[RMDB]
An RNA of 177 nucleotides, treated with 2A3 and DMS and read out base by base. It was measured as part of the RMDB library OK2TST. The RNA was probed in 150 mM KOAc, 10 mM MgCl2 and 150 mM bicine (pH 8.5) at 24 C. For 2A3, 1,339 sequencing reads were counted.
RNA sequence: GGGAACGACUCGAGUAGAGUCGAAAAAUACGGCAAUUAAUUUACAAUAAAAUUCUGAGGGAUAUCUAUGUUUGUACCAGUACAUGUACACAGAUUCAUGGUAUCUGUGAUAGCUAUAGAUGCAGGCUAUUAGUAUGGGGUUCGCCCCAUACUAAUAAAAAGAAACAACAACAACAAC
Reactivity to 2A3 in 0.01 (KOAc 150mM, MgCl2 10mM, bicine 150mM(pH8.5), 24C), signal-to-noise 2, nucleotides 027 to 126: a010u050a020c010g040g030c040a000a050u060u160a060a110u140u300u140a080c030a080a080u170a150a220a100a120u180u090c050u100g030a050g030g000g040a010u020a030u050c020u020a030u100g040u010u110u090g060u060a060c030c000a010g030u040a010c000a040u080g030u060a010c060a000c010a060g060a130u040u050c020a020u120g180g070u080a040u030c000u010g030u030g010a020u050a010g010c040u050a010u040a130g020a020u070g040c040a040g080g000c020
Reactivity to DMS in 0.01 (KOAc 150mM, MgCl2 10mM, bicine 150mM(pH8.5), 24C), signal-to-noise 3, nucleotides 027 to 126: a080u000a050c090g000g010c010a070a080u020u010a080a060u020u010u010a130c050a090a110u010a080a100a080a100u010u010c030u010g000a090g010g010g020a080u000a010u010c010u000a030u000g000u010u010u000g010u010a070c060c070a070g020u000a040c070a020u010g010u000a070c060a060c160a050g010a060u000u000c080a060u000g020g010u010a020u010c010u000g020u010g010a080u000a030g020c060u010a130u010a050g000a070u010g000c070a070g000g010c090